[RMDB]
RNA sequence: GGGAACGACUCGAGUAGAGUCGAAAAGGGGGGGAGAUGGGUGUACCUACGGGAAUCCCUGGUUUCCCCUGAUGUCCAGUCCCUCCCCCGUCCGAGCGAAGGGGGACUCCGGAACAUCUUCCAUUCGGCUUUAUUCCUAGUUCGCUAGGAAUAAAGCAAAAGAAACAACAACAACAAC
Reactivity to 2A3 in 0.01 (KOAc 150mM, MgCl2 10mM, bicine 150mM(pH8.5), 24C), signal-to-noise 1, nucleotides 027 to 126: g000g020g000g010g010g000g000a030g010a030u040g010g030g010u030g020u100a090c010c000u010a040c170g000g000g030a000a060u060c000c010c040u020g120g000u000u010u010c000c010c000c040u000g000a020u020g030u000c000c000a000g050u000c000c000c000u040c060c040c000c020c020g110u090c080c110g070a140g020c090g060a020a050g020g000g020g030g000a000c010u040c070c080g090g000a100a050c010a030u010c000u040u060c040c000a090u120u140c040g080
Reactivity to DMS in 0.01 (KOAc 150mM, MgCl2 10mM, bicine 150mM(pH8.5), 24C), signal-to-noise 2, nucleotides 027 to 126: g000g000g000g010g000g010g020a030g010a140u010g000g010g030u000g020u030a180c030c020u010a090c180g030g010g000a110a210u000c070c000c000u010g020g010u010u000u010c000c010c010c020u010g000a010u010g000u000c000c010a090g010u000c000c070c050u000c000c020c020c010c030g020u010c070c060g000a080g010c080g010a090a060g020g000g000g000g000a030c020u000c070c080g020g000a070a050c010a020u000c010u010u000c010c000a210u000u010c130g000

Structure probing data (2A3 and DMS) for a 177-nucleotide construct.
For 2A3, 1,465 sequencing reads were counted.
Reactivities are rounded to 0.1 and cut off at 0 and 3.
2A3 adducts were read by reverse transcription with SuperScript II with manganese.